[RMDB]
RNA sequence: GGGAACGACUCGAGUAGAGUCGAAAAGGGGUCGACCUCAUCGAUCAAGAAGUUAUUCCAGUUUUCAUUGUCAGAACCCACUGAAGCCUCCACGGUGGAGUUCUUGGAUUUAUGAAAACUGGAAUAACUUCUUGGGAGAGGUCGACGGAGGCACCCACCUGUAACUUAUGUUCGCAUAAGUUACAGGAAAAGAAACAACAACAACAAC
Reactivity to DMS in 0.01 (KOAc 150mM, MgCl2 10mM, bicine 150mM(pH8.5), 24C), signal-to-noise 1, nucleotides 027 to 156: g030g010g010g010u000c010g010a030c000c010u000c010a170u000c140g020a180u010c000a030a030g020a020a020g000u000u000a020u000u000c000c010a060g000u000u000u000u020c000a040u010u010g040u000c050a090g000a010a030c010c010c000a030c010u010g030a070a140g000c040c030u000c050c030a300c020g000g030u010g010g020a110g020u000u000c000u000u000g040g020a060u010u000u000a020u000g000a030a000a020a020c000u000g000g000a000a010u000a010a010c010u000u000c000u000u000g000g000g010a130g000a020g030g010u000c000g010a010c030g000g010a020g000g000c060a300c030c000c010a170

Background: Chemical mapping of a 207-nucleotide RNA with DMS. For DMS, 3,591 sequencing reads were counted. It was measured as part of the RMDB library RNAMAK.